[RMDB]
RNA sequence: GGGAACGACUCGAGUAGAGUCGAAAAUGAUGAAUAGUUGGAGCGGUAUUCAGAGCGGGCAUAACGCAUUUCGUCCAGUCUCAAAAUCAAAACCAGCAUCGAGUGAGACUUGUAAAGAGUAUAACGAUUUAUAACAGUGGUUCGCCACUGUUAUAAAAAAAGAAACAACAACAACAAC
Reactivity to DMS in 0.01 (KOAc 150mM, MgCl2 10mM, bicine 150mM(pH8.5), 24C), signal-to-noise 9, nucleotides 027 to 126: u010g000a100u010g000a080a040u010a080g020u000u000g010g010a090g030c080g000g010u010a040u010u000c080a060g010a160g010c080g010g010g000c070a060u010a070a090c110g020c070a100u000u010u010c050g000u000c030c040a090g010u000c010u010c050a050a060a080a070u020c100a060a050a080a100c070c040a040g010c060a060u010c070g000a080g000u010g000a080g000a050c050u000u000g010u020a060a050a090g010a040g010u020a050u010a100a100c140g000a130
Reactivity to 2A3 in 0.01 (KOAc 150mM, MgCl2 10mM, bicine 150mM(pH8.5), 24C), signal-to-noise 6, nucleotides 027 to 126: u100g040a020u030g020a020a100u080a100g040u040u020g000g000a020g030c030g010g010u050a070u020u130c060a030g010a010g050c030g000g020g000c040a060u050a150a030c080g020c080a050u030u110u110c010g010u000c010c010a030g080u000c000u000c000a100a120a070a080u080c040a040a060a060a120c030c000a010g050c030a060u090c050g020a020g010u060g020a030g020a010c000u010u030g030u060a100a120a050g060a030g040u070a050u030a150a040c080g020a020
Conditions: 150 mM KOAc, 10 mM MgCl2 and 150 mM bicine (pH 8.5), 24 C. Chemical mapping of a 177-nucleotide RNA with DMS and 2A3. Values cover nucleotides 27 to 126.